Chemical mapping of a 177-nucleotide RNA with DMS and 2A3. For DMS the reverse transcriptase was MarathonRT.
[RMDB]
RNA sequence: GGGAACGACUCGAGUAGAGUCGAAAAAUAAAGAGCGUAAACGCGUCAUUGAGUGACGUGAAGAUCAUCCAAGUGUGCUGUCUACAGUGGUAGAUAGCGCACAUUACGCUAAGAUGAUCAUAAAAAAGAAACUAAAUUGCUUCGGCAAUUUAGUUUCAAAAGAAACAACAACAACAAC
Reactivity to DMS in 0.01 (KOAc 150mM, MgCl2 10mM, bicine 150mM(pH8.5), 24C), signal-to-noise 2, nucleotides 027 to 126: a110u030a070a090a100g000a130g030c010g000u000a040a130a280c100g010c000g000u000c020a050u000u030g010a140g040u000g020a010c000g000u000g030a110a120g010a010u000c000a010u000c000c090a060a120g000u000g000u000g000c010u000g000u000c000u000a000c000a250g020u020g020g040u000a010g010a010u000a000g000c010g000c000a000c000a060u010u010a070c020g010c040u000a130a060g000a010u000g010a010u000c010a240u010a000a060a040a030a070a060
Reactivity to 2A3 in 0.01 (KOAc 150mM, MgCl2 10mM, bicine 150mM(pH8.5), 24C), signal-to-noise 1, nucleotides 027 to 126: a000u240a000a110a010g010a010g020c010g010u010a010a060a060c030g000c000g040u000c000a020u050u300g190a140g270u030g020a010c010g000u000g090a140a060g000a010u010c000a000u000c010c060a120a080g000u010g010u000g000c000u000g000u020c000u000a010c000a240g190u250g280g040u200a000g000a000u000a000g000c000g000c000a000c010a000u020u020a000c020g000c040u010a020a000g010a000u010g020a000u000c020a060u230a000a140a020a020a000a000
2A3 adducts were read by reverse transcription with SuperScript II with manganese. For DMS, 1,248 sequencing reads were counted. The 2A3 profile rests on 1,699 reads.